[RMDB]
RNA sequence: GGGAACGACUCGAGUAGAGUCGAAAACGGAACCCGGGGCUCCCGGGGAACACGCGGUGUCCUGGGGAUUGUUGGCGGUCGGACGGCUUCAGAUGGCUUCGAGAUCGUAGUGUCCGCACCGACUCGUAGUAGACCCGAAUCUCCACAUUGCCCCGCCGCCUACUGUAACAUUCGUGUUACAGUAGGCAAAAGAAACAACAACAACAAC
Reactivity to 2A3 in 0.01 (KOAc 150mM, MgCl2 10mM, bicine 150mM(pH8.5), 24C), signal-to-noise 2, nucleotides 027 to 156: c010g000g050a010a020c060c030c020g030g040g010g010c070u170c050c020c030g010g050g030g020a050a020c100a010c050g230c040g030g040u030g000u030c030c040u070g000g000g000g050a010u000u100g100u010u050g070g020c010g000g030u030c000g020g000a030c110g130g020c010u140u110c050a110g020a210u170g030g010c040u050u040c050g070a090g040a300u000c030g050u080a110g000u000g020u040c030c300g000c300a020c300c000g000a010c010u000c030g020u300a010g030u000a020g000a020c300c300c010g000a010a040u010c000u020c020c000a010c010a130u030u160g060c000c000c000c000g010c010c020